RNA sequence: GGGAACGACUCGAGUAGAGUCGAAAACCGGAAUGGUUCCGCCUUGAUCGGGCCAUGCAAUAGUUGCCAACGACAACUAUGCUCCGGUUGCUCAGGCAGCGUAACGCUGCUUGAAAGACCACAUGAAUUAGCGCGACAUUGUUCGCAAUGUCGCGAACAUCGCUCUGGACUUCGGUCCAGAGCGAUGAAAAGAAACAACAACAACAAC
Reactivity to 2A3 in 0.01 (KOAc 150mM, MgCl2 10mM, bicine 150mM(pH8.5), 24C), signal-to-noise 1, nucleotides 027 to 156: c000c000g040g000a050a070u120g000g070u210u300c000c080g010c050c070u220u270g100a270u220c000g000g020g000c030c000a000u000g000c000a000a220u000a000g000u000u000g000c000c160a250a060c110g090a100c050a000a000c030u000a000u000g030c010u000c000c000g020g020u000u030g000c030u020c000a000g000g000c000a000g000c020g070u130a130a000c210g000c100u000g000c000u000u000g000a010a000a010g060a000c030c030a060c030a120u130g130a300a170u150u120a170g040c030g000c000g000a000c000a000u000u000g000u050u050c090g000c110a000a000u000g000u000c000g000c050g000a000a000